[RMDB]
RNA sequence: GGGAACGACUCGAGUAGAGUCGAAAAAACGGCGUUUUACGGGCAGUGUUUGACACGGAUUACGCGUGUAAGUGUAUUCAUCAUAAUGCAAAGUAUGCCGCUUUUGAGAUAGUUAGGCUUGAUGACGGACUUAUUGGACGUUCGCGUCCAAUAAGUCAAAAGAAACAACAACAACAAC
Reactivity to 2A3 in 0.01 (KOAc 150mM, MgCl2 10mM, bicine 150mM(pH8.5), 24C), signal-to-noise 1, nucleotides 027 to 126: a020a000c000g050g010c000g030u000u000u030u160a030c060g060g010g000c000a050g020u030g000u090u130u170g020a000c010a040c050g010g000a090u140u250a040c030g030c030g130u070g100u080a150a120g030u000g010u040a050u010u050c050a060u030c010a050u100a170a010u150g010c120a070a000a000g030u000a060u100g000c000c020g010c040u080u050u060u070g090a090g000a060u050a090g030u050u100a050g090g000c000u020u100g070a090u070g020a050c030g010
Reactivity to DMS in 0.01 (KOAc 150mM, MgCl2 10mM, bicine 150mM(pH8.5), 24C), signal-to-noise 2, nucleotides 027 to 126: a040a030c040g010g030c000g030u010u000u000u000a080c060g000g000g000c050a090g020u010g000u020u000u000g000a050c150a060c130g000g020a090u000u010a050c110g030c050g000u000g010u000a060a130g000u010g000u000a070u000u000c050a090u010c050a080u010a040a080u000g000c050a080a100a040g020u010a040u000g000c020c030g000c050u020u010u000u000g000a130g000a090u000a060g000u010u000a100g040g020c020u000u000g000a060u000g020a110c200g000

This 177-nucleotide RNA was probed chemically with 2A3 and DMS. The RNA was probed in 150 mM KOAc, 10 mM MgCl2 and 150 mM bicine (pH 8.5) at 24 C. It was measured as part of the RMDB library OK2TRN. For DMS, 1,602 sequencing reads were counted.